[RMDB]
RNA sequence: GGGAACGACUCGAGUAGAGUCGAAAAGAUAUGGACCAUGUUAGUACAACUAUAUUGUCAGCGUUGACGAUCGGAAACGAUCGGAGACGCUUGGAUUUAUAUAGUUGGAACCCAUGGUCCUAAGUCACACCAAUAGGUAGUUCGCUACCUAUUGGUGAAAAGAAACAACAACAACAAC
Reactivity to 2A3 in 0.01 (KOAc 150mM, MgCl2 10mM, bicine 150mM(pH8.5), 24C), signal-to-noise 1, nucleotides 027 to 126: g020a010u100a050u290g010g000a000c000c000a000u000g000u020u020a010g000u000a000c000a010a010c010u000a000u000a000u030u010g020u020c010a010g000c000g000u000u020g030a030c000g000a000u020c000g020g140a100a060a110c000g010a000u000c040g000g010a060g010a000c000g000c000u010u050g010g000a000u000u300u020a020u000a000u000a020g010u000u010g000g020a000a000c030c010c010a010u020g010g000u030c000c000u000a000a000g000u020c010a030
Reactivity to DMS in 0.01 (KOAc 150mM, MgCl2 10mM, bicine 150mM(pH8.5), 24C), signal-to-noise 3, nucleotides 027 to 126: g030a040u000a300u000g000g010a030c000c010a000u000g010u010u000a060g000u010a260c010a000a000c000u000a000u000a000u000u000g020u010c010a060g010c000g030u000u000g020a300c010g010a030u000c010g000g000a100a100a230c000g010a010u010c000g010g010a300g000a000c010g010c010u020u000g000g010a030u000u000u000a010u000a000u010a000g000u010u000g000g000a110a120c250c300c000a020u000g000g000u000c000c020u000a000a060g000u000c040a240